[RMDB]
RNA sequence: GGGAACGACUCGAGUAGAGUCGAAAACUCCCCUCAAAAUCGUUUCAGUCCAAAAUUGAUUCGUCGGCCCUGUCAUGAGGCCGAAACGAAGGCACGUACCCCUUCGAAUGGCGUCGGGGAGUCAGCGAAAGCACUGACCCUUUCGAGGGUCAGUGAAACAGGUAUAGACGUUCGCGUCUAUACCUGUAAAAGAAACAACAACAACAAC
Reactivity to 2A3 in 0.01 (KOAc 150mM, MgCl2 10mM, bicine 150mM(pH8.5), 24C), signal-to-noise 1, nucleotides 027 to 156: c000u010c000c000c000c000u090c120a180a160a060a080u030c040g030u000u000u060c020a030g070u100c070c050a130a210a140a160u050u160g070a110u030u040c040g000u000c030g020g000c000c000c000u040g050u060c110a170u120g000a040g050g000c010c000g010a020a000a000c000g010a000a000g020g000c020a000c160g210u240a120c000c010c020c020u000u020c000g050a070a100u020g020g000c030g020u080c080g000g000g000g020a030g000u080c030a020g060c040g110a100a000a000g120c000a000c000u000g000a000c000c000c040u000u030u090c250g060a020g000g010g000u070c010a000g010u000g000a010a000
This 207-nucleotide RNA was probed chemically with 2A3. Source: RMDB library M2RFPK, as collected in RNAgym. Conditions: 150 mM KOAc, 10 mM MgCl2 and 150 mM bicine (pH 8.5), 24 C. 2A3 adducts were read by reverse transcription with SuperScript II with manganese.